[RMDB]
RNA sequence: GGGAACGACUCGAGUAGAGUCGAAAAGAUAUGGAGAUGUAGUGGGAGCUAUAUAUCGGAAACGAUAUAAUAGCAUCGAUCACUAAUCUCCUAAGUCAAAGACUUAGACUCUUCGGAGUCUAAGUCACAUGGGUUAUGGGUUCGCCCAUAACCCAUGAAAAGAAACAACAACAACAAC
Reactivity to 2A3 in 0.01 (KOAc 150mM, MgCl2 10mM, bicine 150mM(pH8.5), 24C), signal-to-noise 2, nucleotides 027 to 126: g000a000u000a020u080g030g000a020g010a000u030g090u300a030g010u000g030g080g080a220g020c000u000a000u000a000u000a010u020c020g000g000a000a010a010c020g010a000u010a000u010a170a300u010a030g000c030a040u300c170g060a090u020c020a000c010u020a000a010u020c000u000c000c000u000a000a010g000u020c040a160a070a110g020a000c000u010u020a000g010a000c000u030c000u000u120c300g130g000a000g000u000c000u010a000a010g000u000c000a000
Reactivity to DMS in 0.01 (KOAc 150mM, MgCl2 10mM, bicine 150mM(pH8.5), 24C), signal-to-noise 1, nucleotides 027 to 126: g010a010u000a040u000g000g010a020g000a020u000g010u000a000g030u000g020g010g000a070g040c000u000a020u000a010u000a000u000c000g020g000a000a000a030c000g020a000u000a000u020a040a020u000a010g010c010a250u010c290g000a090u010c010a030c000u000a010a010u000c000u000c000c000u000a000a060g000u000c010a110a110a130g020a030c000u000u000a010g000a030c000u000c020u000u040c280g040g000a010g010u000c000u000a000a000g010u000c000a010
The record gives the reactivity of an RNA of 177 nucleotides to 2A3 and DMS. High 2A3 reactivity points to a flexible backbone, as in loops and unpaired stretches. The reactions ran in a buffer of 150 mM KOAc, 10 mM MgCl2 and 150 mM bicine (pH 8.5), at 24 C. Values cover nucleotides 27 to 126.